[RMDB]
An RNA of 207 nucleotides, treated with DMS and 2A3 and read out base by base. For DMS the reverse transcriptase was MarathonRT. The data come from the RNA Mapping Database (RMDB), library M2RFPK. Values cover nucleotides 27 to 156. The DMS profile rests on 2,610 reads. The 2A3 profile rests on 2,363 reads.
RNA sequence: GGGAACGACUCGAGUAGAGUCGAAAAAGCAGGAGUACGCUCCUGCAUGGGUAGACGAAUUGACCCCAACUGAAGUUCAAUUCUAACGUUAAAAGGAGGUUUAUAUGACUGGACGUACGCGUCCAGAUGACGAUUUCAUUCUUCGGAAUGAAAUCAACAUUGCGAAGCAGUUCGCUGCUUCGCAAUGAAAAGAAACAACAACAACAAC
Reactivity to DMS in 0.01 (KOAc 150mM, MgCl2 10mM, bicine 150mM(pH8.5), 24C), signal-to-noise 2, nucleotides 027 to 156: a070g000c010a020g020g000a010g040u010a080c300g040c000u000c000c000u000g010c000a020u010g010g020g020u020a110g030a120c050g000a030a050u020u000g020a050c000c010c010c000a060a260c170u000g000a080a090g030u020u010c050a060a030u000u000c030u000a090a070c100g020u030u020a110a070a050a060g000g060a130g000g000u000u000u000a090u000a110u050g000a120c010u000g000g000a030c020g020u000a080c300g060c040g000u030c000c010a020g010a030u000g000a130c110g010a010u000u000u000c000a030u000u000c000u000u030c300g050g020a080a010u000g010a000a010a000u000c010a090a150
Reactivity to 2A3 in 0.01 (KOAc 150mM, MgCl2 10mM, bicine 150mM(pH8.5), 24C), signal-to-noise 4, nucleotides 027 to 156: a000g020c000a000g010g020a010g000u050a060c180g010c090u000c000c000u000g000c000a000u010g000g000g020u120a100g040a160c080g000a020a010u010u010g010a000c000c000c020c020a070a040c190u250g040a030a000g010u100u010c000a000a000u020u000c030u110a110a060c150g070u060u200a050a080a020a030g140g030a050g080g080u050u180u060a130u080a080u210g120a100c010u000g000g010a000c010g010u050a010c210g000c000g090u000c000c000a000g000a010u040g060a030c100g000a000u000u000u000c000a000u010u010c000u040u080c070g040g000a000a000u010g010a000a000a000u000c000a000a010